[RMDB]
An RNA of 177 nucleotides, treated with 2A3 and DMS and read out base by base. For DMS, 9,259 sequencing reads were counted. The 2A3 profile rests on 9,692 reads. The RNA was probed in 150 mM KOAc, 10 mM MgCl2 and 150 mM bicine (pH 8.5) at 24 C.
RNA sequence: GGGAACGACUCGAGUAGAGUCGAAAAAGCAUCUGCGGGGCUGUGGUCCAGCACCACCGUGUGGCCACCAGGUGCUCAUCAGCCAGUGGGACCCGGGAGGAGGGACAAGACCAGAGAACAACAGUGCCCUAUAAAUCAGGUUCGCCUGAUUUAUAGGAAAAGAAACAACAACAACAAC
Reactivity to 2A3 in 0.01 (KOAc 150mM, MgCl2 10mM, bicine 150mM(pH8.5), 24C), signal-to-noise 5, nucleotides 027 to 126: a000g000c010a010u040c010u020g040c090g030g050g020g000c020u040g020u020g050g020u030c040c050a060g040c090a020c010c000a010c020c040g190u170g070u170g170g020c000c010a020c010c010a030g000g000u010g000c010u010c000a080u040c010a010g050c030c010a020g030u060g010g020g050a090c020c090c000g030g010g010a070g040g020a070g020g020g000a020c050a090a040g010a020c010c010a020g020a010g010a120a020c030a010a010c020a060g090u040g140c010
Reactivity to DMS in 0.01 (KOAc 150mM, MgCl2 10mM, bicine 150mM(pH8.5), 24C), signal-to-noise 7, nucleotides 027 to 126: a030g010c020a010u000c010u000g030c210g010g000g000g010c020u000g020u010g010g000u000c040c130a130g030c100a050c010c060a060c040c300g030u010g020u010g000g000c020c010a090c040c030a030g010g000u000g000c020u000c070a080u010c130a080g010c030c030a070g010u000g000g010g000a100c070c040c050g000g000g000a080g020g000a100g000g000g010a100c090a060a070g010a070c050c030a080g000a080g010a070a050c060a030a050c080a080g000u000g010c140